[RMDB]
RNA sequence: GGGAACGACUCGAGUAGAGUCGAAAACUUUCAAAGGUAGAGGGUGAGUCCAUCAAAAGAAUACUUGAGGAGUUGCGUAGUGCCGGGUUAGAUAGUAUACCGGGUGGGGGUGCUGAGAUACUCGCGGUAUAGGUAUACGUUUCGACGUAUACCUAUAAAAAGAAACAACAACAACAAC
Reactivity to 2A3 in 0.01 (KOAc 150mM, MgCl2 10mM, bicine 150mM(pH8.5), 24C), signal-to-noise 2, nucleotides 027 to 126: c020u010u170u120c070a100a050a030g000g020u030a020g040a040g120g050g050u070g050a050g040u050c040c010a080u090c020a090a070a050a030g110a100a120u070a160c050u060u100g010a030g010g010a040g070u090u080g000c020g070u060a040g030u050g050c000c000g000g010g060u050u030a060g010a120u020a020g090u030a050u020a150c030c010g000g000g020u070g010g010g000g000g070u040g000c030u050g020a060g000a090u040a050c020u030c040g010c060g070g000
Reactivity to DMS in 0.01 (KOAc 150mM, MgCl2 10mM, bicine 150mM(pH8.5), 24C), signal-to-noise 6, nucleotides 027 to 126: c070u000u010u010c080a080a110a120g010g010u000a060g010a110g010g000g010u010g000a110g020u010c030c030a080u000c110a060a050a100a090g000a100a090u010a040c070u000u010g010a130g000g000a050g020u000u000g010c070g010u000a060g010u010g010c030c030g000g010g010u000u000a080g020a070u010a050g010u000a110u000a080c070c030g010g000g020u000g010g010g000g010g010u000g000c040u000g000a060g000a090u010a060c070u000c050g010c100g020g010

An RNA of 177 nucleotides, treated with 2A3 and DMS and read out base by base.
The RNA was probed in 150 mM KOAc, 10 mM MgCl2 and 150 mM bicine (pH 8.5) at 24 C.
Values cover nucleotides 27 to 126.